[RMDB]
RNA sequence: GGGAACGACUCGAGUAGAGUCGAAAAUGUUAAGCAUGUACUUGACGGUACUGUUGAUAGUUUGGAUAUGCAACUAUAUUCACGUGACAUUAACGAGUAUCACAAAAUUUACUUAGACUUGAAAGAAGUUCGUAUUAUUCUUCGGAAUAAUACGAACAAAAGAAACAACAACAACAAC
Reactivity to DMS in 0.01 (KOAc 150mM, MgCl2 10mM, bicine 150mM(pH8.5), 24C), signal-to-noise 6, nucleotides 027 to 126: u010g010u000u000a030a040g020c030a050u000g000u000a040c250u010u000g020a170c150g010g000u000a000c000u000g020u000u000g010a030u000a110g020u000u020u000g010g000a030u000a000u000g030c140a100a130c290u010a020u000a030u000u000c010a040c300g020u010g010a030c060a020u000u010a010a040c030g010a040g010u000a000u000c080a110c100a040a040a040a040u010u010u000a020c070u000u010a050g000a080c020u000u010g010a050a120a110g000a080a100
Reactivity to 2A3 in 0.01 (KOAc 150mM, MgCl2 10mM, bicine 150mM(pH8.5), 24C), signal-to-noise 5, nucleotides 027 to 126: u100g010u030u050a010a010g010c060a060u110g010u050a030c020u030u040g060a040c060g000g020u010a000c000u010g040u030u010g020a030u030a100g030u020u050u060g020g010a010u010a020u060g100c120a180a090c130u070a010u020a000u060u040c020a030c140g080u130g070a010c030a050u030u010a020a010c080g050a050g030u000a000u040c020a000c060a080a140a060a070u080u110u000a000c000u010u020a030g040a100c000u020u050g060a070a080a030g090a110a020
The record gives the reactivity of an RNA of 177 nucleotides to DMS and 2A3. The 2A3 profile rests on 5,581 reads. 2A3 adducts were read by reverse transcription with SuperScript II with manganese.